Structure probing data (2A3 and DMS) for a 177-nucleotide construct. For DMS, 1,733 sequencing reads were counted. The 2A3 profile rests on 3,749 reads. High 2A3 reactivity points to a flexible backbone, as in loops and unpaired stretches. Conditions: 150 mM KOAc, 10 mM MgCl2 and 150 mM bicine (pH 8.5), 24 C.

RNA sequence: GGGAACGACUCGAGUAGAGUCGAAAAGAUAUGGAAUCUCAGCAUUGCCACUCUACAUCGGAAACGAUGUAGGAGCAAUGAACUACUAGGAUUCCUAAGUCAAAAGAAGACACUUCGGUGUCUUCAACGGUGUUUAAGAGUUCGCUCUUAAACACCGAAAAGAAACAACAACAACAAC
Reactivity to 2A3 in 0.01 (KOAc 150mM, MgCl2 10mM, bicine 150mM(pH8.5), 24C), signal-to-noise 2, nucleotides 027 to 126: g020a010u100a040u140g010g020a020a020u000c070u020c050a030g000c000a010u000u000g040c050c000a300c060u070c000u000a000c000a000u000c010g000g060a090a080a040c000g000a010u020g010u000a010g020g000a000g000c000a000a030u020g010a020a060c060u180a060c030u060a100g010g000a010u000u020c000c020u010a230a030g060u020c050a000a040a010a200g000a010a000g020a000c010a000c030u070u200c300g140g000u020g000u020c000u020u000c000a000a000
Reactivity to DMS in 0.01 (KOAc 150mM, MgCl2 10mM, bicine 150mM(pH8.5), 24C), signal-to-noise 2, nucleotides 027 to 126: g000a020u010a300u000g000g000a010a010u000c000u010c050a010g010c000a010u000u000g000c010c030a150c110u050c010u000a000c000a000u010c000g010g000a110a110a220c030g000a000u000g000u000a010g000g000a130g020c000a010a010u010g000a090a020c130u010a290c000u000a030g000g020a030u000u000c000c000u000a030a120g000u010c000a090a100a120a130g010a020a010g010a020c000a000c000u000u020c130g020g000u000g000u000c000u000u000c000a050a080